[RMDB]
RNA sequence: GGGAACGACUCGAGUAGAGUCGAAAAUGUCUGCAGAGCUAGUCACAUACGACUAUACUAUCAUGAGCACAUGGGAUCAGACAUGACUAGGGAUCUGAUCGUACGCUAGUCAGUAGUACGUAGUACGAACGUACAAUGUCUUCGGACAUUGUACGUUAAAAGAAACAACAACAACAAC
Reactivity to 2A3 in 0.01 (KOAc 150mM, MgCl2 10mM, bicine 150mM(pH8.5), 24C), signal-to-noise 5, nucleotides 027 to 126: u040g020u030c010u030g030c030a010g020a020g150c040u040a010g010u040c020a060c030a230u230a070c120g000a000c020u010a020u040a090c040u030a030u150c020a060u080g070a030g100c060a030c020a230u080g070g010g010a040u060c010a000g020a040c020a020u040g010a020c050u050a030g080g020g100a100u020c030u050g020a050u030c030g030u070a010c040g000c040u000a000g080u070c040a040g040u080a010g000u020a080c070g040u030a020g010u000a030c040g020
Reactivity to DMS in 0.01 (KOAc 150mM, MgCl2 10mM, bicine 150mM(pH8.5), 24C), signal-to-noise 8, nucleotides 027 to 126: u010g010u000c010u010g010c160a080g000a120g020c170u000a030g000u000c030a140c220a120u010a130c180g000a040c020u000a060u010a080c060u010a070u000c060a050u000g000a130g020c100a120c080a040u000g000g000g000a070u000c030a040g000a040c050a080u000g010a080c060u000a040g010g010g000a110u000c040u010g000a090u000c050g010u000a050c050g000c040u000a070g000u000c080a080g010u000a060g010u000a030c100g010u000a070g010u000a060c100g010